[RMDB]
RNA sequence: GGGAACGACUCGAGUAGAGUCGAAAAUCUUGUCUGUAGUGGGCGAGAGCCGGGUGCAUGACAACAAAGUUGGCCACCAACACACUGUUGGGUCCUGAGGCAACACUCGGACUUGUUCCAGGUGUUGCCGGACAGCAAGGUUCGCCUUGCUGUCCGGAAAAGAAACAACAACAACAAC
Reactivity to 2A3 in 0.01 (KOAc 150mM, MgCl2 10mM, bicine 150mM(pH8.5), 24C), signal-to-noise 4, nucleotides 027 to 126: u020c000u030u030g030u000c020u010g100u060a130g270u190g150g030g000c030g030a060g010a010g060c030c010g130g020g010u030g000c060a050u180g020a030c020a060a020c040a020a200a050g150u230u150g050g000c030c060a160c070c010a060a000c030a010c030a060c150u160g000u030u010g000g020g000u040c010c020u150g070a120g060g000c010a020a010c000a000c010u030c030g000g020a010c010u080u200g090u170u000c010c010a020g000g020u020g000u010u000g000
Reactivity to DMS in 0.01 (KOAc 150mM, MgCl2 10mM, bicine 150mM(pH8.5), 24C), signal-to-noise 9, nucleotides 027 to 126: u010c060u000u000g010u000c020u000g010u000a070g010u010g010g010g020c010g010a190g010a150g020c020c020g020g010g010u000g010c040a030u010g010a040c040a030a040c180a060a070a120g010u010u000g010g000c050c060a180c030c010a010a010c020a140c240a140c220u010g000u000u000g000g000g010u000c020c020u000g010a120g010g000c000a010a010c000a010c000u000c050g010g010a020c030u000u000g010u010u000c010c000a040g000g010u000g010u000u000g010